Record summary
Chemical mapping of a 177-nucleotide RNA with 2A3.
[RMDB]
RNA sequence: GGGAACGACUCGAGUAGAGUCGAAAAACACAUUUCCUUCUUCUACUUACUCCACAAGGCUUCUUUUCUUCAAACCAAACAUGCCCAUCUAUUUCAAACAGGGAGGCAGUGUGGAGUAGUGGAAAGAAGCCGGUUAUAGUUUCGACUAUAACCGGCUAAAAGAAACAACAACAACAAC
Reactivity to 2A3 in 0.01 (KOAc 150mM, MgCl2 10mM, bicine 150mM(pH8.5), 24C), signal-to-noise 3, nucleotides 027 to 126: a000c140a010c030a090u070u030u000c000c000u040u040c000u000u000c000u000a010c020u200u040a010c010u010c000c000a000c000a010a030g070g000c020u000u010c000u060u140u030u030c050u120u190c090a080a120a130c050c050a070a060a060c060a060u140g050c000c010c000a040u010c030u110a190u060u180u100c110a180a100a100c060a090g000g010g000a000g000g010c000a030g010u020g000u000g000g000a000g000u000a000g000u010g000g000a070a000a000g050a000

Source information:
Values cover nucleotides 27 to 126. The reactions ran in a buffer of 150 mM KOAc, 10 mM MgCl2 and 150 mM bicine (pH 8.5), at 24 C.